[RMDB]
RNA sequence: GGGAACGACUCGAGUAGAGUCGAAAAUGGAGAUGCCAUGCCGACCCGAAGAGGAAAGAAGGACGCGAGACACGAACCCGUGAGUGAAUUCCCGCUUUAUUCACUGGGGUCGACAACUCUGGGGAGAGGUAAUACAGUACUUCGGUACUGUAUUACCAAAAGAAACAACAACAACAAC
Reactivity to DMS in 0.01 (KOAc 150mM, MgCl2 10mM, bicine 150mM(pH8.5), 24C), signal-to-noise 4, nucleotides 027 to 126: u000g000g010a120g000a100u000g020c040c020a040u010g010c050c030g000a110c060c010c030g020a090a070g010a150g000g000a060a050a080g020a110a100g010g000a050c090g000c110g010a040g000a140c110a110c040g000a040a050c010c010c000g010u000g000a030g020u000g010a030a090u000u000c020c000c000g040c300u010u010u000a030u000u000c020a030c010u000g030g000g010g000u000c020g010a040c130a060a150c050u000c040u010g010g010g000g000a070g000a050
Reactivity to 2A3 in 0.01 (KOAc 150mM, MgCl2 10mM, bicine 150mM(pH8.5), 24C), signal-to-noise 2, nucleotides 027 to 126: u090g060g000a100g050a070u080g110c050c010a000u020g020c020c000g040a060c000c030c030g020a060a030g050a050g040g030a100a020a020g090a040a040g040g020a010c050g040c040g060a070g010a010c040a020c100g030a020a040c000c010c010g010u030g020a030g000u000g030a050a050u080u080c020c000c000g010c000u070u050u030a070u040u040c020a010c110u130g010g010g000g030u010c000g020a030c000a090a060c000u000c020u060g010g020g000g030a130g000a030